The data come from the RNA Mapping Database (RMDB), library TTRDEL. An RNA of 177 nucleotides, treated with DMS and 2A3 and read out base by base. 2A3 adducts were read by reverse transcription with SuperScript II with manganese. High DMS reactivity at an A or C suggests that its Watson-Crick edge is free. The reactions ran in a buffer of 150 mM KOAc, 10 mM MgCl2 and 150 mM bicine (pH 8.5), at 24 C. For 2A3, 35,416 sequencing reads were counted.

RNA sequence: GGGAACGACUCGAGUAGAGUCGAAAAGAUAUGGACAGAACUACCACCAACUGGACGUUGAAAUCGGAAACGAUGGAGUCCACGAACGUGGCUGUCCUAAGUCAAAAGGUAGCCUUCGGGCUACCAAGACAUAAAAUAGGUUCGCCUAUUUUAUGUCAAAAGAAACAACAACAACAAC
Reactivity to DMS in 0.01 (KOAc 150mM, MgCl2 10mM, bicine 150mM(pH8.5), 24C), signal-to-noise 9, nucleotides 027 to 126: g000a030u000a300u000g000g010a020c010a010g000a080a040c090u020a300c020c010a020c010c030a060a280c300u000g000g010a020c000g010u000u030g000a080a110a010u000c010g000g000a100a060a170c000g000a010u000g000g000a100g000u000c000c000a000c020g000a060a140c280g000u000g000g000c010u000g010u000c000c000u010a030a070g000u000c040a070a060a110a100g000g010u000a000g000c000c000u000u010c180g020g000g010c000u000a000c000c000a020a040
Reactivity to 2A3 in 0.01 (KOAc 150mM, MgCl2 10mM, bicine 150mM(pH8.5), 24C), signal-to-noise 9, nucleotides 027 to 126: g020a020u080a030u150g000g010a000c010a000g030a140a060c120u220a070c300c010a010c010c010a020a030c020u010g000g010a000c010g270u300u080g040a070a050a010u010c000g010g030a080a030a010c000g000a000u010g010g040a020g000u000c020c000a000c030g010a030a010c030g000u000g000g000c010u000g000u000c000c000u020a110a020g050u020c030a020a020a040a160g000g000u000a000g000c010c010u060u110c300g090g020g000c000u000a000c000c010a000a000